The record gives the reactivity of an RNA of 177 nucleotides to DMS. For DMS, 1,523 sequencing reads were counted. Source: RMDB library TTRDES, as collected in RNAgym. In probing experiments dimethyl sulfate is read out at A N1 and C N3, which are open when not base-paired. For DMS the reverse transcriptase was MarathonRT.

[RMDB]
RNA sequence: GGGAACGACUCGAGUAGAGUCGAAAAAAAAGAUAUGGAUCAAAGGGAGACCCUCUAUCCGUUGAAAUUUCCUCGGAAACGAGGAAAUGGAGGAUAUGGUCAUCGAUCUUUGAUCCUAAGUCAAAAACUUAUUGGGUUAGUUCGCUAACCCAAUAAGAAAAGAAACAACAACAACAAC
Reactivity to DMS in 0.01 (KOAc 150mM, MgCl2 10mM, bicine 150mM(pH8.5), 24C), signal-to-noise 1, nucleotides 027 to 126: a090a020a050a110g000a030u000a300u010g000g000a020u000c000a010a020a010g000g040g000a120g000a000c000c000c000u000c000u000a010u000c000c000g040u000u040g000a110a120a010u000u010u010c000c000u000c000g020g000a060a090a060c020g010a000g000g000a000a000a000u000g000g000a130g020g020a010u000a000u010g000g000u000c020a150u000c230g000a070u040c000u000u000u010g010a010u000c000c000u010a010a050g000u000c000a070a090a050a140a090